[RMDB]
RNA sequence: GGGAACGACUCGAGUAGAGUCGAAAAAAAAAGAUAUGGACACCUGAGUAGCUGCCUACCGACGAAGCUGUCUCGGAAACGAGACAGCAGAGGUAGGACCCAGCGAAACGGUGUCCUAAGUCAAAAACUGAAAUUCAUAGUUCGCUAUGAAUUUCAGAAAAGAAACAACAACAACAAC
Reactivity to DMS in 0.01 (KOAc 150mM, MgCl2 10mM, bicine 150mM(pH8.5), 24C), signal-to-noise 1, nucleotides 027 to 126: a010a000a180a200a230g010a000u010a300u010g040g000a000c010a000c000c000u000g010a010g030u010a080g000c000u010g050c030c000u000a010c000c000g000a040c210g000a100a040g000c000u000g000u000c000u000c000g000g000a030a010a040c010g000a010g000a030c010a000g040c000a000g000a010g000g010u000a010g000g000a300c190c300c270a000g000c050g010a120a230a160c130g000g000u000g000u000c000c000u000a000a080g000u000c010a050a060a050a050a110